[RMDB]
RNA sequence: GGGAACGACUCGAGUAGAGUCGAAAAGUAUCCCUAGAUGAUAAAACACCGCACAUGGCUCGUAAGAGCGGUUAAAUUAGCAAGUAAUGCAAAUUACGCGAGGUAACGCAUGGCAUAGGCUCGUUAGAAAAGGGAGAAUCCUUCGGGAUUCUCCCAACAGUGGAAUACUCUUCGGAGUAUUCCACUGAAAAGAAACAACAACAACAAC
Reactivity to DMS in 0.01 (KOAc 150mM, MgCl2 10mM, bicine 150mM(pH8.5), 24C), signal-to-noise 2, nucleotides 027 to 156: g040u000a100u000c000c020c000u000a110g020a090u000g010a110u000a100a150a120a100c010a050c010c020g010c050a150c150a110u000g020g050c020u000c030g020u000a170a160g020a150g040c000g000g030u000u000a060a050a230u010u000a070g000c040a060a070g010u000a070a020u000g000c060a060a110a120u010u000a050c020g040c060g000a120g000g000u020a100a030c050g010c050a090u000g020g000c030a130u010a090g050g010c030u000c010g020u000u010a140g000a040a080a120a120g000g020g010a010g010a030a010u000c000c000u000u010c300g000g090g050a010u010u000c010u000c000c000c000a000a020
Reactivity to 2A3 in 0.01 (KOAc 150mM, MgCl2 10mM, bicine 150mM(pH8.5), 24C), signal-to-noise 2, nucleotides 027 to 156: g050u010a040u070c000c000c010u010a040g030a180u110g010a030u190a080a140a010a050c020a020c010c020g010c000a030c020a150u120g110g000c020u040c020g080u060a130a030g060a010g060c040g000g020u080u040a010a060a130u110u110a030g080c070a100a030g120u090a050a110u100g030c080a110a070a040u180u010a030c010g030c040g020a000g020g120u050a050a000c050g020c030a020u060g030g030c030a040u080a010g010g100c020u010c100g040u050u030a030g120a090a100a020a010g000g000g010a010g000a010a010u010c000c000u030u030c080g000g000g000a000u000u000c010u000c020c000c000a000a000